Structure probing data (DMS) for a 177-nucleotide construct. The reactions ran in a buffer of 150 mM KOAc, 10 mM MgCl2 and 150 mM bicine (pH 8.5), at 24 C.
RNA sequence: GGGAACGACUCGAGUAGAGUCGAAAACCCGUUCCACCCCCGCGGCACACUCCUUCCCCCCUGCGGGCCCCCCCAUAAGAUGGCAGGAACCCACUCAUUGGGGUCCGCUGUUCCAUUCUUUCUUACCACUCUUAUUAUGGUUCGCCAUAAUAAGAGUAAAAGAAACAACAACAACAAC
Reactivity to DMS in 0.01 (KOAc 150mM, MgCl2 10mM, bicine 150mM(pH8.5), 24C), signal-to-noise 3, nucleotides 027 to 126: c000c000c000g020u000u000c000c000a110c140c060c010c000c010g010c070g000g000c060a070c090a080c090u010c020c030u000u000c010c000c000c030c020c020u020g010c060g000g000g000c020c000c010c000c040c020c020a030u010a020a080g010a050u000g010g030c040a100g000g000a030a040c040c010c000a090c230u010c170a170u010u000g000g000g020g000u000c010c010g010c050u000g000u000u000c030c020a060u000u010c060u000u000u010c040u010u000a180c170c150